An RNA of 177 nucleotides, treated with DMS and 2A3 and read out base by base. Conditions: 150 mM KOAc, 10 mM MgCl2 and 150 mM bicine (pH 8.5), 24 C.
[RMDB]
RNA sequence: GGGAACGACUCGAGUAGAGUCGAAAACUUUAAAGUUCUUGAUAAUGGUAUCAUUAGGGAUGUAAAUCCUGAUGAUAAGUGCUUUGCUAAUAAGCACCGGUCCUUCACACAAUGGUAUCAUGAGCAUGUUAGUUACAUUCUUCGGAAUGUAACUAACAAAAGAAACAACAACAACAAC
Reactivity to DMS in 0.01 (KOAc 150mM, MgCl2 10mM, bicine 150mM(pH8.5), 24C), signal-to-noise 4, nucleotides 027 to 126: c060u000u000u040a050a100a130g010u010u000c020u020u000g020a120u000a110a030u010g000g010u000a010u010c000a010u000u000a150g020g010g000a010u000g010u000a070a150a040u000c000c000u000g010a050u000g010a040u010a120a060g000u000g010c010u000u000u000g010c300u020a070a090u010a010a010g010c020a010c000c070g000g010u000c080c120u000u000c090a080c280a110c200a030a020u000g000g000u000a000u000c010a020u000g000a110g020c150a110u000
Reactivity to 2A3 in 0.01 (KOAc 150mM, MgCl2 10mM, bicine 150mM(pH8.5), 24C), signal-to-noise 4, nucleotides 027 to 126: c010u100u090u150a100a150a040g020u050u010c020u070u070g030a050u060a210a040u060g020g000u010a000u010c010a010u010u040a070g000g010g040a010u040g060u180a030a180a050u030c000c010u020g010a020u010g010a000u010a020a050g000u000g000c000u000u060u020g030c050u070a130a070u070a280a000g010c000a000c000c010g000g050u040c010c040u030u070c050a050c010a010c030a070a030u030g020g000u030a000u010c010a020u020g010a010g030c040a040u080